[RMDB]
About this RNA
An RNA of 177 nucleotides, treated with DMS and 2A3 and read out base by base. Source: RMDB library OK1LIB, as collected in RNAgym. The RNA was probed in 150 mM KOAc, 10 mM MgCl2 and 150 mM bicine (pH 8.5) at 24 C. For DMS, 18,831 sequencing reads were counted. For DMS the reverse transcriptase was MarathonRT. For 2A3, 15,111 sequencing reads were counted.
RNA sequence: GGGAACGACUCGAGUAGAGUCGAAAAAUUGCCGCAACCGGUCCCACCGGCAAGGUCGAAGGCUUUACCGUUCCUGCUCAGGUGAUCGUCUCCCAUCUUCAGGACGUCGUGCGAUUCAAGACCGGUGAUGCUUCUGUUAAUUCGUUAACAGAAGCAUAAAAGAAACAACAACAACAAC
Reactivity to DMS in 0.01 (KOAc 150mM, MgCl2 10mM, bicine 150mM(pH8.5), 24C), signal-to-noise 7, nucleotides 027 to 126: a080u020u010g020c020c030g000c180a140a040c030c020g000g000u010c010c050c030a090c090c030g000g000c040a040a040g000g010u030c090g010a160a140g010g000c040u000u000u020a050c080c030g000u010u000c030c010u010g000c080u010c090a090g000g000u020g000a080u020c040g010u000c070u000c000c020c020a120u030c070u000u020c090a090g010g010a060c080g020u000c050g000u000g000c050g000a110u010u030c110a110a140g010a050c010c000g000g010u010g010
Reactivity to 2A3 in 0.01 (KOAc 150mM, MgCl2 10mM, bicine 150mM(pH8.5), 24C), signal-to-noise 9, nucleotides 027 to 126: a000u100u100g040c020c000g020c050a070a050c020c020g010g030u030c030c020c000a030c020c020g020g000c030a030a050g060g010u010c050g080a090a040g050g020c000u070u080u060a080c040c010g030u080u050c010c000u020g030c040u040c100a040g010g060u040g050a130u070c030g070u010c070u020c050c020c010a040u040c040u150u130c050a050g050g030a050c030g030u060c020g020u050g070c040g060a080u060u110c060a110a030g040a080c000c000g000g030u030g010